[RMDB]
RNA sequence: GGGAACGACUCGAGUAGAGUCGAAAAGAUAUGGACCGUACGCGAGGAGCAACAGCUCGGACUCGGAAACGAGUUUCGAGACAUGCUCCUCACGGUCCUAAGUCAAAGCUUCUGUUCGCAGAAGCAACAGGGGGUAUAACUUCGGUUAUACCCCCUGAAAAGAAACAACAACAACAAC
Reactivity to DMS in 0.01 (KOAc 150mM, MgCl2 10mM, bicine 150mM(pH8.5), 24C), signal-to-noise 2, nucleotides 027 to 126: g000a040u000a300u010g010g030a000c000c000g020u000a130c300g070c300g020a000g020g020a020g000c010a020a140c300a180g000c000u010c000g010g000a000c000u010c000g020g020a030a090a140c000g020a030g000u000u000u000c010g010a000g000a050c100a230u010g030c000u000c000c000u000c010a000c000g020g000u010c000c000u000a000a030g010u000c030a120a090a180g020c010u000u000c000u000g000u000u000c210g030c000a030g010a020a010g020c000a080a050
Reactivity to 2A3 in 0.01 (KOAc 150mM, MgCl2 10mM, bicine 150mM(pH8.5), 24C), signal-to-noise 2, nucleotides 027 to 126: g070a030u060a020u060g000g000a000c010c030g010u070a040c300g000c120g220a010g020g000a020g020c090a140a140c110a230g030c010u000c010g000g000a000c000u000c000g000g030a030a020a010c020g030a010g000u020u150u300c020g010a000g000a010c000a080u230g010c010u000c000c000u000c010a010c020g000g000u000c000c010u020a040a030g010u030c050a100a080a150g010c000u010u000c000u000g070u010u050c300g020c090a000g020a020a040g010c000a020a010